[RMDB]
RNA sequence: GGGAACGACUCGAGUAGAGUCGAAAAUCUGCUCGUCAAAUGCAUUUAGCAAGGUUUAUGCGGACGCUACAGCGCUUGGCAGAUGAAUUCGGUAUUGCUGUUGUCAUUACUAAUCAGGUGGUCGCCCAAGUGGAUGGCAUUUCCUUUAAUCCUGAUACAGCAUCCAUUUAUUCGUAAAUGGAUGCUGAAAAGAAACAACAACAACAAC
Reactivity to 2A3 in 0.01 (KOAc 150mM, MgCl2 10mM, bicine 150mM(pH8.5), 24C), signal-to-noise 3, nucleotides 027 to 156: u010c020u020g000c000u040c060g110u090c070a020a040a110u150g020c010a070u100u080u090a020g000c040a070a050g130g030u110u100u040a100u180g060c060g020g010a030c070g000c010u060a080c040a060g030c010g020c120u040u050g040g000c030a050g040a090u110g090a030a070u140u180c070g000g040u110a020u100u070g000c020u020g010u000u010g020u040c030a040u110u050a060c040u050a010a030u030c000a030g000g020u030g040g070u130c030g060c030c000c000a090a020g070u050g060g020a070u070g060g000c090a110u040u040u050c000c000u040u130u090a020a020u040c000c000u020g000a010u030a050
Reactivity to DMS in 0.01 (KOAc 150mM, MgCl2 10mM, bicine 150mM(pH8.5), 24C), signal-to-noise 2, nucleotides 027 to 156: u010c020u000g000c010u000c130g010u000c020a040a080a110u000g030c030a050u000u000u000a080g030c030a110a110g010g010u000u000u000a080u040g000c040g000g000a090c060g030c030u000a100c060a100g030c110g030c090u000u020g000g010c030a060g030a060u010g000a060a140u000u010c060g030g020u000a080u010u010g020c010u010g020u000u000g010u010c030a150u000u010a130c100u000a070a090u000c040a080g010g000u010g020g040u000c040g010c030c010c010a070a110g020u000g030g010a030u000g020g020c000a240u020u000u010c020c060u000u020u000a100a140u000c010c010u000g000a120u010a280